Structure probing data (2A3 and DMS) for a 207-nucleotide construct.
For 2A3, 1,662 sequencing reads were counted.
Conditions: 150 mM KOAc, 10 mM MgCl2 and 150 mM bicine (pH 8.5), 24 C.
Values cover nucleotides 27 to 156.
For 2A3 the reverse transcriptase was SuperScript II with manganese.
Source: RMDB library OK3TST, as collected in RNAgym.
RNA sequence: GGGAACGACUCGAGUAGAGUCGAAAAAGAACAAGGAAGGCAAUUACAAGAGGCAAAAGCUGGAUGGGAAAAUACUGCAAAAGCACUUGAAGGUAAAGUUGAGCUUAAACAAGUAGAGGAUUAUGUUGCGGGGUUUAAGAUUCCAGAGUUGAAGCAACAAAGACUACUAGUUCGCUAGUAGUCUUUGAAAAGAAACAACAACAACAAC
Reactivity to 2A3 in 0.01 (KOAc 150mM, MgCl2 10mM, bicine 150mM(pH8.5), 24C), signal-to-noise 2, nucleotides 027 to 156: a000g010a020a000c000a000a000g010g010a010a000g010g010c000a020a020u130u090a120c050a140a040g010a010g020g000c020a040a040a060a110g000c060u080g030g050a040u030g030g020g040a030a090a040a070u120a080c030u020g060c020a070a010a050a000g020c010a020c000u030u050g010a040a000g050g000u060a040a020a030g020u040u050g050a020g000c000u060u130a010a090a060c050a130a000g040u070a010g040a020g030g010a010u070u050a030u180g040u010u030g010c000g010g040g000g000u010u030u020a020a020g020a030u130u040c030c010a000g010a010g100u040u100g030a080a000g010c010a000a060
Reactivity to DMS in 0.01 (KOAc 150mM, MgCl2 10mM, bicine 150mM(pH8.5), 24C), signal-to-noise 2, nucleotides 027 to 156: a090g010a060a030c020a080a040g000g000a040a080g000g020c000a080a110u010u000a110c130a120a060g010a070g020g030c040a030a050a050a110g010c060u000g030g040a060u000g000g000g010a080a080a040a080u000a050c020u010g030c070a040a080a060a090g030c020a040c040u000u000g030a080a100g000g010u000a010a020a040g010u010u000g010a100g010c040u000u000a060a060a090c050a060a100g010u000a060g010a130g010g000a080u000u010a060u000g040u000u000g010c070g010g000g030g020u000u000u030a020a120g010a120u000u000c030c020a160g010a080g000u000u000g020a040a080g010c040a060a140